The record gives the reactivity of an RNA of 177 nucleotides to 2A3 and DMS. The 2A3 profile rests on 2,093 reads. Values cover nucleotides 27 to 126. The RNA was probed in 150 mM KOAc, 10 mM MgCl2 and 150 mM bicine (pH 8.5) at 24 C.

RNA sequence: GGGAACGACUCGAGUAGAGUCGAAAAGAAAGAAAGAAGAAACGAGGCUCCUAAAGCGCAAAAAGAAAAACGAAAGCGCAUUCGUAUCAGUUAAGGAGUCUCGAAAAGAAAGAAAGAAAGAAGAAAAACUAAUGAGCUGAUUCGUCAGCUCAUUAGUAAAAGAAACAACAACAACAAC
Reactivity to 2A3 in 0.01 (KOAc 150mM, MgCl2 10mM, bicine 150mM(pH8.5), 24C), signal-to-noise 2, nucleotides 027 to 126: g080a000a090a000g060a010a080a030g120a130a000g010a030a080a000c000g000a000g000g000c000u000c020c000u030a110a100a060g030c000g000c080a000a140a090a040a000g270a050a110a150a020a000c060g050a060a000a060g020c000g000c000a010u040u070c040g020u050a120u240c050a110g080u090u090a040a000g020g010a000g000u010c000u000c000g000a000a000a000a010g020a030a050a000g080a000a060a000g060a080a000a000g090a040a030g090a040a030a060a000
Reactivity to DMS in 0.01 (KOAc 150mM, MgCl2 10mM, bicine 150mM(pH8.5), 24C), signal-to-noise 2, nucleotides 027 to 126: g020a050a070a110g000a060a080a050g010a110a140g000a090a120a250c010g020a010g020g040c000u000c040c000u010a090a110a100g010c000g030c140a040a060a060a060a090g050a100a070a060a070a060c120g040a050a080a090g050c020g020c030a100u010u020c060g050u020a090u040c110a060g020u000u000a060a010g010g010a000g000u000c000u040c000g000a000a020a020a040g000a010a050a080g010a040a080a100g000a030a040a100g000a090a140g000a080a120a040a070